Chemical mapping of a 177-nucleotide RNA with DMS and 2A3. The RNA was probed in 150 mM KOAc, 10 mM MgCl2 and 150 mM bicine (pH 8.5) at 24 C. Values cover nucleotides 27 to 126. As a SHAPE reagent, 2A3 marks flexible, mostly unpaired nucleotides at the ribose 2'-OH. For 2A3, 18,653 sequencing reads were counted.
RNA sequence: GGGAACGACUCGAGUAGAGUCGAAAACGUACAUAAUGUUCCAUAGGAUUGGUCCAAGUACCGAUCCUUGGGGAACACCUGCCGAAACUCGGUAUCUUUUUGGGCCAUCUUCCGUAUCGUACCAUAAAAUAAUGAUGCAUUUCGAUGCAUCAUUAUUAAAAGAAACAACAACAACAAC
Reactivity to DMS in 0.01 (KOAc 150mM, MgCl2 10mM, bicine 150mM(pH8.5), 24C), signal-to-noise 9, nucleotides 027 to 126: c130g010u010a070c130a090u000a120a090u000g010u000u000c000c010a200u000a030g010g000a010u000u000g020g010u000c020c190a090a150g020u010a010c000c000g010a010u000c010c010u000u000g020g010g010g000a030a010c020a060c150c090u000g000c030c010g000a080a100a120c140u000c040g010g010u000a040u000c020u000u000u000u000u010g010g000g000c030c030a070u000c040u000u000c020c020g020u000a050u000c030g000u000a150c020c020a110u010a070a070
Reactivity to 2A3 in 0.01 (KOAc 150mM, MgCl2 10mM, bicine 150mM(pH8.5), 24C), signal-to-noise 9, nucleotides 027 to 126: c020g070u120a040c030a150u260a140a110u150g010u020u000c010c000a030u060a010g010g000a000u000u020g010g010u010c060c070a300a060g040u070a050c000c000g000a010u000c000c000u000u030g070g020g020g000a000a000c010a010c010c020u040g020c020c010g100a180a160a130c090u050c040g030g030u040a120u090c050u060u140u020u080u080g050g000g000c020c010a050u010c030u060u030c020c010g010u030a030u040c020g010u020a050c010c010a070u150a120a240